[RMDB]
RNA sequence: GGGAACGACUCGAGUAGAGUCGAAAAGCGCUGUCCUGAGUGAAAGUAAUCCGGCUUCCGCCCUUAAUCAUCUCAACCAUGCGUUACAGCUCGAUCCCCGCUGUGGCGUGAAAAAAGACAAACAGCAGCUGGAGCGCAGACUGCGCAAUGACAGCCGGCAGGAUAUUAUUUUCGAAUAAUAUCCUGCAAAAGAAACAACAACAACAAC
Reactivity to DMS in 0.01 (KOAc 150mM, MgCl2 10mM, bicine 150mM(pH8.5), 24C), signal-to-noise 1, nucleotides 027 to 156: g000c060g010c090u020g020u020c020c060u000g000a110g030u020g010a190a040a070g030u010a140a120u010c070c030g010g010c020u000u000c040c040g040c000c010c050u000u000a050a080u000c060a120u020c050u000c020a090a210c070c070a200u020g000c000g010u000u010a050c040a030g020c030u000c040g000a180u010c010c020c040c060g000c020u000g000u010g000g000c020g000u000g000a030a050a060a050a090a090g000a150c090a050a050a080c070a080g000c050a040g010c010u040g000g000a110g000c060g000c040a070g020a040c040u000g010c020g010c070a220a100u000g000a020c040a060g030c000c020g000
Reactivity to 2A3 in 0.01 (KOAc 150mM, MgCl2 10mM, bicine 150mM(pH8.5), 24C), signal-to-noise 2, nucleotides 027 to 156: g020c010g020c000u010g030u060c020c030u040g050a010g050u020g070a170a070a020g040u050a050a090u050c070c010g010g010c000u080u030c020c050g050c000c000c010u020u140a100a060u140c090a070u080c040u010c080a050a110c070c020a060u200g000c000g000u000u000a000c000a000g040c010u070c110g220a240u100c020c000c040c010g000c000u020g000u020g010g010c030g000u040g050a070a060a000a000a000a050g080a050c070a000a150a000c010a040g040c020a000g000c000u020g000g020a050g000c040g000c010a020g080a090c050u070g000c000g000c000a020a050u050g070a010c010a020g000c000c010g010